RNA sequence: GGGAACGACUCGAGUAGAGUCGAAAACAUAGCACGAUUGGAGGCUUUGGAAUUUGAGUCUCGGUGAAUCAAAGUUCUUUGGUCUUGUGAAUCCACGUGCAACUAAAAGGAGUGCUAACAGUGACUUAUUCGUAAAUUAGUUCGCUAAUUUACGAAUAAAAGAAACAACAACAACAAC
Reactivity to DMS in 0.01 (KOAc 150mM, MgCl2 10mM, bicine 150mM(pH8.5), 24C), signal-to-noise 5, nucleotides 027 to 126: c070a140u000a110g020c030a010c000g000a130u000u010g010g010a050g010g000c010u000u000u000g010g010a030a050u000u000u010g000a030g010u000c020u010c250g010g020u010g000a030a050u000c020a020a040a050g000u000u000c010u000u010u000g000g010u000c010u000u000g030u000g010a100a170u000c030c020a150c030g000u000g000c030a120a110c140u010a060a060a080a080g000g000a110g010u000g010c060u000a060a080c120a080g000u000g000a080c110u000u000
Reactivity to 2A3 in 0.01 (KOAc 150mM, MgCl2 10mM, bicine 150mM(pH8.5), 24C), signal-to-noise 4, nucleotides 027 to 126: c010a030u140a040g010c010a000c020g080a100u040u140g090g000a010g000g000c000u010u020u040g020g020a050a020u040u040u030g010a020g050u010c040u060c170g190g120u190g040a020a010u020c020a050a020a050g130u130u000c010u020u030u030g000g000u020c000u050u200g060u070g160a090a060u020c020c010a010c040g000u040g010c040a030a030c050u130a010a030a040a080g090g010a040g000u040g000c010u050a070a040c030a070g040u030g090a020c010u020u010